[RMDB]
RNA sequence: GGGAACGACUCGAGUAGAGUCGAAAAUUAAGGCGACCAGUGAAGCGCCUUACGCCUGGUUCAGUCAUUUACCGAUGGCUAAACACCGCCCGUUGGCCUCACGGCGCACGCUGACCAACCUGUGCUGGAGCACAUAUGCUUUCGAGCAUAUGUGCUCAAAAGAAACAACAACAACAAC
Reactivity to DMS in 0.01 (KOAc 150mM, MgCl2 10mM, bicine 150mM(pH8.5), 24C), signal-to-noise 2, nucleotides 027 to 126: u010u000a080a060g020g010c020g000a060c080c060a140g010u000g000a190a090g030c050g000c020c000u000u000a010c300g020c030c010u010g050g010u010u010c080a040g010u010c000a020u000u000u010a160c300c230g000a060u000g000g010c010u000a020a030a000c030a120c110c150g000c070c020c040g000u000u030g030g070c050c000u000c090a020c060g000g000c020g000c060a060c050g010c030u000g000a040c040c000a060a090c030c030u000g010u000g010c080u000g000
Reactivity to 2A3 in 0.01 (KOAc 150mM, MgCl2 10mM, bicine 150mM(pH8.5), 24C), signal-to-noise 1, nucleotides 027 to 126: u080u000a060a000g010g010c020g030a200c020c080a110g060u060g270a210a010g060c000g000c070c000u000u040a040c020g010c000c010u080g050g020u000u000c040a000g010u000c010a050u060u030u200a110c040c060g050a010u030g000g000c040u000a020a040a000c070a030c030c020g060c060c000c060g060u030u050g060g000c010c010u060c010a030c030g000g020c000g020c010a000c000g010c030u050g000a060c000c050a010a040c010c040u060g060u100g080c040u080g170